[RMDB]
RNA sequence: GGGAACGACUCGAGUAGAGUCGAAAAUUGUCUGGAGCAGGCAACCAGAUGCCACCUCGGCCACCCAGUGGCCAGUCGGACAGCAUCAUGCAUCCUUCCAUGAACCAAUCAAGCAUUGCCCAAGAUCGAGGUGAGAGCCUGGGUGUUGGGGAGGGGCAUGCCAAAAUACAUUCGUGUAUUUUGGCAUAAAAGAAACAACAACAACAAC
Reactivity to DMS in 0.01 (KOAc 150mM, MgCl2 10mM, bicine 150mM(pH8.5), 24C), signal-to-noise 1, nucleotides 027 to 156: u000u010g000u000c030u010g000g010a140g000c010a060g010g000c080a110a090c040c100a130g000a080u010g000c000c040a080c060c040u000c070g000g010c000c010a030c040c230c150a190g070u010g060g060c000c000a040g040u020c080g000g010a120c040a120g040c000a120u000c030a060u000g000c090a130u000c040c020u050u000c020c000a120u010g000a130a110c060c090a000a070u010c040a120a060g030c010a090u000u000g000c030c030c000a050a050g010a060u000c030g000a080g080g080u000g030a230g010a170g000c060c040u000g000g020g000u010g000u000u010g000g000g000g000a090g020g030g010g050c130
Reactivity to 2A3 in 0.01 (KOAc 150mM, MgCl2 10mM, bicine 150mM(pH8.5), 24C), signal-to-noise 2, nucleotides 027 to 156: u070u060g030u020c010u020g080g020a040g130c040a020g060g030c050a080a030c040c030a040g010a020u010g040c020c020a060c020c010u040c050g020g000c020c010a020c070c150c060a040g020u010g000g000c010c000a030g070u070c050g030g020a110c050a040g020c000a020u020c010a020u120g020c010a130u080c000c010u040u000c060c000a060u130g040a050a060c060c010a000a050u120c060a100a000g030c040a080u020u250g040c000c000c010a030a020g060a090u080c030g100a030g040g000u060g040a100g000a020g010c010c050u080g020g020g000u130g140u060u070g030g020g000g000a060g020g000g010g000c010